The data come from the RNA Mapping Database (RMDB), library OK1LIB. Chemical mapping of a 177-nucleotide RNA with 2A3.
[RMDB]
RNA sequence: GGGAACGACUCGAGUAGAGUCGAAAAGAUCAGCAGUGCCGCCAUCGUCGGCACCUUCGCGAUCCGACGCGCGAAUUCGAUUGUGCUGGUCGCGAGUUCGUCAGCGGGAAACACCUUGCUGACCAUCGCACCCUCAGGGUUUCGACCCUGAGGGUGCAAAAGAAACAACAACAACAAC
Reactivity to 2A3 in 0.01 (KOAc 150mM, MgCl2 10mM, bicine 150mM(pH8.5), 24C), signal-to-noise 2, nucleotides 027 to 126: g000a020u060c000a000g030c030a000g020u000g030c000c020g010c040c050a300u150c120g230u060c000g000g000c000a000c000c000u020u030c000g000c020g000a010u000c020c080g110a030c040g000c000g000c010g050a050a020u110u110c050g100a060u190u130g040u060g020c000u040g000g010u000c000g060c020g040a050g030u100u080c020g000u000c000a000g000c010g010g000g040a100a160a030c050a000c080c000u110u300g020c000u000g040a000c000c000a040u070c090